RNA sequence: GGGAACGACUCGAGUAGAGUCGAAAAGGGACGCCUUUAGAAGAAGAGGCUAGGUGGUAUUCCGGUGUGGGAUACUUGGUAAUAUGUAACGCUAAUUGCAUAAGAUUGUAGGACGGAAUUUACAGUCAAAACGGUCCUGCGUUCGCGCAGGACCGAAGUAGAUGGCAAGGUUCGCCUUGCCAUCUACAAAAGAAACAACAACAACAAC
Reactivity to 2A3 in 0.01 (KOAc 150mM, MgCl2 10mM, bicine 150mM(pH8.5), 24C), signal-to-noise 2, nucleotides 027 to 156: g020g000g000a020c060g040c000c010u070u010u020a170g020a240a000g030a010a000g000a030g020g000c020u040a040g020g010u050g000g010u070a050u040u060c020c050g000g060u150g000u170g070g000g000a020u030a050c000u020u050g050g010u080a060a110u040a090u130g040u010a050a040c060g020c100u030a080a100u110u040g020c030a040u020a080a080g030a060u030u050g000u010a010g020g030a020c080g030g020a040a010u060u020u060a020c030a050g000u040c030a010a080a040a070c020g050g000u000c000c000u000g010c000g040u050u040c150g000c000g000c020a010g000g010a020c000c000g000a000a000